[RMDB]
RNA sequence: GGGAACGACUCGAGUAGAGUCGAAAAGAUAUGGAUCUAACGUAAGACAGCCAUACAUCGGAAACGAUGUUUGGCAAUGACGCGUUAAGGAUCCUAAGUCAAAACCGAAGAAGUUCGCUUCUUCGGACUCGCGUAAUAUCUUCGGAUAUUACGCGAGAAAAGAAACAACAACAACAAC
Reactivity to 2A3 in 0.01 (KOAc 150mM, MgCl2 10mM, bicine 150mM(pH8.5), 24C), signal-to-noise 2, nucleotides 027 to 126: g000a020u030a000u050g020g000a000u000c010u020a000a010c000g010u020a120a080g280a290c130a070g060c030c010a020u040a010c000a000u000c030g000g000a000a010a000c010g000a020u000g000u010u020u000g000g010c000a030a050u100g010a020c060g050c000g020u040u030a080a150g300g020a000u000c010c000u000a010a000g020u010c030a020a000a170a210c000c000g000a000a000g010a000a010g030u050u300c300g050c120u020u000c000u000u000c010g020g000a040
Reactivity to DMS in 0.01 (KOAc 150mM, MgCl2 10mM, bicine 150mM(pH8.5), 24C), signal-to-noise 1, nucleotides 027 to 126: g000a000u000a040u000g000g010a030u000c020u010a010a010c000g020u010a020a300g010a300c140a080g000c000c000a010u000a010c010a020u000c000g040g000a020a020a030c000g020a010u000g020u000u020u010g030g020c000a110a010u000g000a030c120g000c010g000u000u000a100a210g020g000a010u000c000c000u000a020a090g000u020c000a140a070a110a180c000c000g000a000a020g000a000a000g010u010u000c270g010c020u000u000c000u010u000c000g000g000a020